About this RNA:
The record gives the reactivity of an RNA of 177 nucleotides to DMS and 2A3. The RNA was probed in 150 mM KOAc, 10 mM MgCl2 and 150 mM bicine (pH 8.5) at 24 C. DMS adducts were read by reverse transcription with MarathonRT. The DMS profile rests on 627 reads.
RNA sequence: GGGAACGACUCGAGUAGAGUCGAAAACCACAGAUCUUCGGAUCUGUGGAAACAACAAAUACUGUCAGUUGAGACAGACACAAAUACAUUGACUGUACAAUGAAAGCGAUUGCUUCGGCAAUCGCAAUCCAAAAGUUCAGUUCGCUGAACUUUUGGAAAAAGAAACAACAACAACAAC
Reactivity to DMS in 0.01 (KOAc 150mM, MgCl2 10mM, bicine 150mM(pH8.5), 24C), signal-to-noise 1, nucleotides 027 to 126: c000c000a010c000a000g000a010u000c000u000u050c210g000g000a000u000c000u000g040u000g000g000a090a050a050c120a090a100c120a110a060a080u000a190c020u000g060u000c000a140g000u010u040g020a220g010a040c020a000g000a100c290a120c140a080a050a060u020a100c100a040u000u000g000a130c090u010g000u010a040c100a050a050u000g010a050a150a100g000c000g000a000u000u000g000c000u000u000c090g000g020c020a010a010u000c020g000c010a040a040
Reactivity to 2A3 in 0.01 (KOAc 150mM, MgCl2 10mM, bicine 150mM(pH8.5), 24C), signal-to-noise 1, nucleotides 027 to 126: c000c000a020c000a000g010a000u000c010u110u150c220g130g000a000u000c000u000g000u000g000g000a060a020a010c020a000a020c000a000a100a060u100a150c010u010g000u000c040a070g030u170u140g210a080g010a100c020a000g070a020c020a000c010a150a140a020u170a050c020a060u100u000g050a030c030u140g030u200a040c000a060a040u080g000a140a020a010g000c020g000a000u000u000g020c000u040u090c190g050g000c030a000a000u000c010g010c000a000a010